[RMDB]
RNA sequence: GGGAACGACUCGAGUAGAGUCGAAAAUCCUCGCCCGACACCCGGAGGUGGAAGAGGUCCGCUACGCGACCUCCAGGAGGCUCGAGGGAAAGCCAGUCUGGAAGGUACACCCGAACCUGCGGCGUGACAGAUGCAGCCAAUUCGUUGGCUGCAUCUGAAAAGAAACAACAACAACAAC
Reactivity to 2A3 in 0.01 (KOAc 150mM, MgCl2 10mM, bicine 150mM(pH8.5), 24C), signal-to-noise 2, nucleotides 027 to 126: u030c000c000u000c010g000c000c020c000g090a070c010a020c010c000c000g100g150a110g050g020u060g020g060a090a050g100a080g090g040u040c040c030g050c150u220a080c170g060c080g110a040c010c020u000c000c000a030g010g000a000g050g000c020u040c060g120a160g000g090g000a020a070a000g020c020c000a020g120u030c010u040g040g030a090a090g010g000u030a070c030a090c070c000c000g000a040a050c010c010u110g020c030g010g020c080g050u000g020a010
Reactivity to DMS in 0.01 (KOAc 150mM, MgCl2 10mM, bicine 150mM(pH8.5), 24C), signal-to-noise 1, nucleotides 027 to 126: u000c020c000u000c060g030c050c000c020g020a260c060a040c010c010c040g010g010a070g000g010u020g000g030a150a100g070a100g010g010u000c100c020g040c130u010a050c260g000c100g000a100c010c000u000c020c000a010g010g000a200g000g000c040u000c070g000a120g030g000g010a120a090a060g000c000c010a060g020u000c010u010g010g000a090a090g010g030u020a070c090a140c030c000c040g030a120a050c050c030u000g000c020g000g000c090g030u010g020a170
Chemical mapping of a 177-nucleotide RNA with 2A3 and DMS. The data come from the RNA Mapping Database (RMDB), library OK2TRN. Reactivities are rounded to 0.1 and cut off at 0 and 3. The 2A3 profile rests on 1,621 reads.